[RMDB]
RNA sequence: GGGAACGACUCGAGUAGAGUCGAAAAGAGCAGGGGAAAAACCCUGACUAUUCUAUUACCGGGAAAUUGUGUUUGGGGGUAUUAGACCCGUACGUCUCGUCCAAAGUUCUGAGUGCGUGUCGAGAAAGGGUUUACAUAAGUUCGCUUAUGUAAACCCAAAAGAAACAACAACAACAAC
Reactivity to DMS in 0.01 (KOAc 150mM, MgCl2 10mM, bicine 150mM(pH8.5), 24C), signal-to-noise 3, nucleotides 027 to 126: g010a090g020c020a010g000g000g030g000a070a130a080a100a190c030c010c000u000g020a040c000u000a050u000u020c030u000a030u030u010a090c040c000g000g020g000a030a080a110u020u050g010u000g000u010u020u010g000g000g010g000g000u030a080u040u000a080g000a040c020c020c020g040u010a040c130g000u010c020u010c030g010u000c040c040a050a110a140g010u010u010c050u030g010a060g010u000g020c040g020u000g000u010c050g000a060g000a100a070a110
Reactivity to 2A3 in 0.01 (KOAc 150mM, MgCl2 10mM, bicine 150mM(pH8.5), 24C), signal-to-noise 2, nucleotides 027 to 126: g150a030g000c020a040g000g010g000g170a000a140a090a110a130c000c000c000u000g020a000c000u030a110u010u000c040u000a020u030u070a020c020c020g000g050g020a000a210a110u280u240g060u040g090u170u070u120g080g000g010g000g010u080a100u060u040a150g050a060c030c000c030g010u020a030c030g030u040c020u020c000g090u030c000c050a050a110a000g030u120u050c050u060g060a030g050u050g000c060g010u060g070u070c030g000a020g080a120a030a000